[RMDB]
RNA sequence: GGGAACGACUCGAGUAGAGUCGAAAAUCUCAGCCAAUGGCGAGCCGACUGUUAAGUUGUAUACAUCUGUAGAGAAUGCUCAGCAGGAUAAGGGUAUUGCAAUCCCGCAUGACAUUGACCUCGGAGAGGUGAACCGUUAAUUCGUUAACGGUUCACCAAAAGAAACAACAACAACAAC
Reactivity to 2A3 in 0.01 (KOAc 150mM, MgCl2 10mM, bicine 150mM(pH8.5), 24C), signal-to-noise 2, nucleotides 027 to 126: u000c000u000c010a000g050c000c040a150a080u240g050g000c020g060a000g000c000c030g050a040c020u030g030u150u020a100a100g000u050u060g030u090a100u020a030c020a050u020c050u060g050u090a040g030a010g040a200a050u040g010c040u020c040a030g020c010a040g010g020a000u020a080a110g200g010g010u160a080u050u300g050c030a050a050u030c000c020c030g010c120a140u010g000a000c020a030u030u040g060a110c000c000u020c040g040g050a080g010a010
Reactivity to DMS in 0.01 (KOAc 150mM, MgCl2 10mM, bicine 150mM(pH8.5), 24C), signal-to-noise 4, nucleotides 027 to 126: u000c020u000c010a160g020c090c080a060a110u010g010g020c050g010a110g010c030c020g010a060c060u010g000u010u010a090a150g020u000u000g030u000a110u010a080c090a100u000c060u000g010u020a080g010a120g010a090a070u010g000c080u010c010a100g010c010a040g000g020a050u010a070a070g010g000g000u010a090u010u000g000c120a130a130u000c020c010c010g030c050a050u000g000a060c050a040u010u000g000a130c070c030u000c080g000g000a080g000a120

Structure probing data (2A3 and DMS) for a 177-nucleotide construct. For DMS, 3,110 sequencing reads were counted. For 2A3 the reverse transcriptase was SuperScript II with manganese. Values cover nucleotides 27 to 126.